[RMDB]
RNA sequence: GGGAACGACUCGAGUAGAGUCGAAAAGGUCAUUAUAGGCUUCGAAAGUUGCCAUAGACCAUGACAGUAUUACCAACAGGAAACGCAUGGCAUAGACUAUUGUCAUACCGAACUCCUUGGUGAUUAUGAUGUACUUAUAGUUCGCUAUAAGUACAUCAAAAGAAACAACAACAACAAC
Reactivity to DMS in 0.01 (KOAc 150mM, MgCl2 10mM, bicine 150mM(pH8.5), 24C), signal-to-noise 9, nucleotides 027 to 126: g000g010u000c010a100u010u000a070u010a160g020g010c010u000u000c010g010a120a100a160g010u000u000g000c000c010a090u000a090g000a040c040c030a080u000g010a110c130a130g020u010a030u000u000a010c010c000a030a080c200a080g000g000a010a070a200c160g020c100a020u000g010g000c010a010u000a080g010a140c290u010a090u000u000g010u000c000a020u000a050c090c030g010a090a110c170u000c010c020u000u000g000g000u000g000a020u000u000a110u000
Reactivity to 2A3 in 0.01 (KOAc 150mM, MgCl2 10mM, bicine 150mM(pH8.5), 24C), signal-to-noise 9, nucleotides 027 to 126: g000g000u000c010a000u010u170a060u150a190g010g000c000u010u000c020g050a060a040a030g010u020u010g000c000c000a010u030a020g010a010c010c010a010u060g080a020c040a030g130u080a030u010u030a010c000c010a030a070c040a130g000g020a020a050a010c020g010c030a010u010g010g000c020a010u050a070g210a170c080u150a160u170u050g000u010c000a000u020a040c040c030g020a060a050c030u000c000c000u010u020g000g010u010g020a010u020u100a070u190